[RMDB]
RNA sequence: GGGAACGACUCGAGUAGAGUCGAAAAUAAGGUGGGACUUUUCCCUCGAGUUCGAGCGGUCGGACUCAGAGGGGAGUGUGAUCCUGGUACCGCCGUAGAAACAGGAUUACGACGUCUUACCGAGAUUCAAACUCGGCCCCUCUCAGAGGUGACUCUGGUGAGUUAUACUCUUCGGAGUAUAACUCACAAAAGAAACAACAACAACAAC
Reactivity to 2A3 in 0.01 (KOAc 150mM, MgCl2 10mM, bicine 150mM(pH8.5), 24C), signal-to-noise 2, nucleotides 027 to 156: u180a040a020g010g000u040g030g000g000a010c010u290u080u050u040c000c000c000u000c000g000a000g000u000u000c000g000a010g000c060g110g090u120c000g000g020a000c000u000c180a020g000a000g020g020g000g000a040g030u180g000u010g000a000u010c000c000u010g030g010u020a030c020c020g020c030c030g060u090a040g060a030a210a010c000a000g010g010a000u000u000a010c100g030a020c060g050u000c000u010u020a030c000c000g000a010g010a020u120u170c100a220a090a050c030u020c020g010g000c010c000c000c000u050c020u030c010a010g000a010g070g050u110g060a120c020u000c020u040g000
This 207-nucleotide RNA was probed chemically with 2A3. 2A3 adducts were read by reverse transcription with SuperScript II with manganese. The RNA was probed in 150 mM KOAc, 10 mM MgCl2 and 150 mM bicine (pH 8.5) at 24 C. The 2A3 profile rests on 1,474 reads.